[RMDB]
RNA sequence: GGGAACGACUCGAGUAGAGUCGAAAACUGCACCGUGAGAGUUCCAACUUUGACUCCAUCUAUAUCUGCCCCAGUACCUUCGCCUGUGCACAGCUUGCCACUGGCGCUGCCUGCCGCCUGGUGGAGGCGUUAUAGAAGGUUUCGACCUUCUAUAACGAAAAGAAACAACAACAACAAC
Reactivity to DMS in 0.01 (KOAc 150mM, MgCl2 10mM, bicine 150mM(pH8.5), 24C), signal-to-noise 9, nucleotides 027 to 126: c060u000g010c070a060c060c060g020u000g010a090g010a170g010u000u000c050c050a090a130c120u000u010u000g010a100c040u000c030c030a050u000c040u000a050u000a040u000c040u000g000c110c010c000c070a130g010u010a150c030c020u000u000c020g010c010c010u000g000u010g020c030a120c040a030g010c020u000u000g020c010c010a130c160u000g010g020c020g010c090u000g000c120c060u000g010c070c040g010c020c020u000g000g020u000g010g010a030g000g000
Reactivity to 2A3 in 0.01 (KOAc 150mM, MgCl2 10mM, bicine 150mM(pH8.5), 24C), signal-to-noise 7, nucleotides 027 to 126: c020u050g010c030a040c040c040g050u070g050a170g000a010g050u080u060c050c030a080a060c120u100u090u140g030a040c000u000c030c010a070u000c030u060a080u020a040u100c030u070g030c010c000c000c000a030g070u080a070c010c000u000u020c010g010c010c010u050g030u070g030c010a010c010a030g010c010u070u150g030c020c000a290c180u110g010g000c020g010c020u020g010c000c020u040g040c050c050g010c010c020u030g010g000u010g010g000a000g000g020